[RMDB]
RNA sequence: GGGAACGACUCGAGUAGAGUCGAAAAACACGGAACUUCGGUUCCGUGUAUAGGGACGAAAUAACACGAUAGCGCUUGUCGCCCGAGCAAAAAGGCGGAAAUACUGCAUCCUCUUCGGAGGAUGCAAUUGACGCAGAAUAUUCGUAUUCUGCGUCAAAAAAGAAACAACAACAACAAC
Reactivity to 2A3 in 0.01 (KOAc 150mM, MgCl2 10mM, bicine 150mM(pH8.5), 24C), signal-to-noise 2, nucleotides 027 to 126: a010c000a000c030g000g010a020a010c010u060u080c220g050g030u010u000c010c000g000u000g000u000a010u010a000g050g050g050a010c060g090a080a030a120u180a160a020c060a020c110g090a050u060a040g170c080g000c050u040u070g000u010c000g030c020c000c000g010a040g060c060a050a100a000a030a040g050g000c010g030g030a070a060a050u160a040c100u020g000c010a000u030c010c000u000c020u020u090c270g080g000a000g000g000a000u010g000c020a000a000
Reactivity to DMS in 0.01 (KOAc 150mM, MgCl2 10mM, bicine 150mM(pH8.5), 24C), signal-to-noise 3, nucleotides 027 to 126: a030c000a000c000g000g000a020a010c000u000u010c170g030g010u010u000c000c000g030u000g010u000a000u000a070g010g000g030a090c070g010a050a070a050u000a050a070c140a130c060g000a050u000a050g000c060g010c040u000u000g000u010c020g000c020c000c030g010a070g010c130a030a030a050a070a060g010g020c020g010g000a070a090a070u010a080c150u010g010c010a020u000c000c000u000c000u000u010c200g010g000a010g020g010a000u000g010c000a010a020